[RMDB]
RNA sequence: GGGAACGACUCGAGUAGAGUCGAAAAGAGCAACUUAGGAUUUUACGCUCCCCGGUGCGUCUCGAACCGCGCCGGGCCAAACCCACAGGGGCUGGCGGUCCUGUGCGGUCAAAAUCUUUCCGCUGGAAUACCUAUCCCAGUUUCGACUGGGAUAGAACAAUUAGGAUAACUUCGGUUAUCCUAAUUGAAAAGAAACAACAACAACAAC
Reactivity to DMS in 0.01 (KOAc 150mM, MgCl2 10mM, bicine 150mM(pH8.5), 24C), signal-to-noise 1, nucleotides 027 to 156: g000a060g020c020a040a070c090u000u000a080g010g000a040u010u010u010u000a300c240g000c040u000c000c020c000c030g010g110u000g000c030g010u000c060u000c270g030a220a150c120c010g020c020g000c000c000g000g010g000c040c020a060a040a070c010c010c000a030c040a050g000g020g000g010c010u010g010g000c020g020g010u000c000c000u000g000u000g040c050g060g020u020c030a000a060a060a050u000c020u010u010u000c060c040g040c000u000g010g010a120a200u000a120c150c000u010a030u000c000c000c000a020g000u010u000u000c300g010a040c000u000g040g010g010a000u000a000g000a050a110
Reactivity to 2A3 in 0.01 (KOAc 150mM, MgCl2 10mM, bicine 150mM(pH8.5), 24C), signal-to-noise 1, nucleotides 027 to 156: g010a000g000c010a020a040c210u040u050a050g020g070a020u030u020u020u020a020c020g000c000u010c000c010c000c010g010g000u000g000c010g010u020c070u110c300g090a110a020c050c010g000c010g000c000c000g000g000g000c000c000a020a010a010c000c000c000a000c010a000g020g020g010g000c020u000g000g000c000g010g010u040c000c000u000g010u010g020c250g000g000u030c040a000a000a000a000u010c000u080u140u040c020c000g000c010u010g010g040a130a120u190a200c000c000u000a010u000c000c000c000a010g000u020u030u160c180g070a010c020u000g000g000g000a000u000a000g000a000a010